[RMDB]
An RNA of 177 nucleotides, treated with 2A3 and DMS and read out base by base. For DMS the reverse transcriptase was MarathonRT. For DMS, 2,504 sequencing reads were counted.
RNA sequence: GGGAACGACUCGAGUAGAGUCGAAAACGCAUCGGCGGUGGCCGCCGGGAGGGCCACGAACAUGCCAUGGACCAGCGCGGCCGGCUUACUCACCACUCGGUAGUGCUUGGUGUGCGCGGUGAACCGGGUUCCACACCAUAUUCGUAUGGUGUGGAACAAAAGAAACAACAACAACAAC
Reactivity to 2A3 in 0.01 (KOAc 150mM, MgCl2 10mM, bicine 150mM(pH8.5), 24C), signal-to-noise 3, nucleotides 027 to 126: c060g010c040a050u090c070g030g000c030g080g000u010g000g010c000c060g000c000c040g060g050g020a090g030g040g000c010c010a010c000g010a090a050c070a080u300g000c000c000a080u120g040g020a000c010c040a130g000c020g010c000g020g020c000c020g020g020c010u080u110a020c020u040c100a020c030c020a110c090u120c090g030g000u000a000g010u030g050c040u090u300g010g020u130g030u080g010c010g010c030g020g010u040g010a040a030c010c000g030g020
Reactivity to DMS in 0.01 (KOAc 150mM, MgCl2 10mM, bicine 150mM(pH8.5), 24C), signal-to-noise 2, nucleotides 027 to 126: c070g010c120a050u000c070g010g000c010g030g010u000g000g020c020c020g010c010c030g030g020g010a110g020g000g010c000c000a010c020g000a050a160c200a100u000g000c010c000a150u010g010g000a070c020c000a130g020c030g020c010g010g000c020c010g000g010c020u010u010a030c010u010c120a050c070c050a080c180u000c150g000g000u000a030g020u010g030c040u000u000g080g010u010g010u020g020c000g030c010g010g010u000g020a060a170c010c010g030g010